[RMDB]
The record gives the reactivity of an RNA of 177 nucleotides to 2A3 and DMS. 2A3 adducts were read by reverse transcription with SuperScript II with manganese. The reactions ran in a buffer of 150 mM KOAc, 10 mM MgCl2 and 150 mM bicine (pH 8.5), at 24 C. High 2A3 reactivity points to a flexible backbone, as in loops and unpaired stretches.

RNA sequence: GGGAACGACUCGAGUAGAGUCGAAAAGCACAAGGAAGAGACACCCAAUAACAGGUCUGUGAUGCCCGUAGAUGUUCGGGGCUCCACGCGCACUACAAUGAGUGGUGGUGCUAUAAGUAGUAGCCAGCCUUUUUCAUGGUUUCGACCAUGAAAAAGGAAAAGAAACAACAACAACAAC
Reactivity to 2A3 in 0.01 (KOAc 150mM, MgCl2 10mM, bicine 150mM(pH8.5), 24C), signal-to-noise 7, nucleotides 027 to 126: g030c010a030c040a080a060g070g040a050a050g040a010g030a030c010a060c030c010c010a010a030u120a080a030c080a050g000g040u000c020u030g070u040g040a030u100g010c020c000c010g030u050a060g020a190u140g060u110u060c030g020g000g060g000c000u000c020c010a040c020g030c020g000c010a010c020u070a020c040a050a180u200g030a060g090u080g030g010u030g010g020u040g000c010u030a050u010a170a030g040u080a000g010u010a010g010c000c010a010g010
Reactivity to DMS in 0.01 (KOAc 150mM, MgCl2 10mM, bicine 150mM(pH8.5), 24C), signal-to-noise 4, nucleotides 027 to 126: g000c040a050c070a090a090g020g020a060a070g000a120g020a070c090a090c040c010c050a050a070u050a080a100c140a080g010g000u000c040u000g010u030g020a090u010g010c020c010c010g030u000a070g030a090u040g020u030u000c010g010g000g010g000c010u010c060c020a030c060g010c150g000c020a060c070u010a010c080a050a110u030g000a130g040u020g000g010u010g000g030u020g000c000u010a050u020a080a070g020u020a080g010u030a050g020c020c040a190g000